[RMDB]
RNA sequence: GGGAACGACUCGAGUAGAGUCGAAAAGGGGUAAACUACGGCUUCCGGAUUCCUGGAUAGAGCAUCUCAUAGGAAAGUACCGUUAGAAAGAUCAACUCGUAAUUGAUUGAGUAUAAAUAACCUCUAGGCUGGUAACUGAAUUCGUUCAGUUACCAGCAAAAGAAACAACAACAACAAC
Reactivity to 2A3 in 0.01 (KOAc 150mM, MgCl2 10mM, bicine 150mM(pH8.5), 24C), signal-to-noise 5, nucleotides 027 to 126: g000g000g000g000u060a050a100a020c090u090a010c050g000g020c010u040u000c000c000g030g030a090u080u080c010c030u030g020g040a100u090a180g100a020g020c050a040u040c040u010c110a150u170a130g010g030a020a080a000g030u080a090c000c010g010u010u010a010g020a030a060a010g010a000u000c010a010a020c050u030c100g150u220a090a090u020u020g020a010u000u010g020a020g020u010a000u020a060a090a010u070a020a030c000c010u020c010u040a050g080
Reactivity to DMS in 0.01 (KOAc 150mM, MgCl2 10mM, bicine 150mM(pH8.5), 24C), signal-to-noise 2, nucleotides 027 to 126: g000g020g050g000u000a070a000a060c070u040a050c040g000g000c040u000u010c020c000g050g000a100u010u020c000c050u030g020g000a080u010a110g000a060g020c160a120u000c010u010c140a110u110a110g000g000a080a000a030g020u050a020c000c080g000u000u000a020g000a150a180a100g020a000u000c010a000a010c090u010c290g000u040a120a300u000u000g000a070u000u000g000a080g000u000a100u000a070a030a090u040a170a030c040c000u000c000u020a070g020
The record gives the reactivity of an RNA of 177 nucleotides to 2A3 and DMS.
DMS adducts were read by reverse transcription with MarathonRT.
The reactions ran in a buffer of 150 mM KOAc, 10 mM MgCl2 and 150 mM bicine (pH 8.5), at 24 C.
2A3 adducts were read by reverse transcription with SuperScript II with manganese.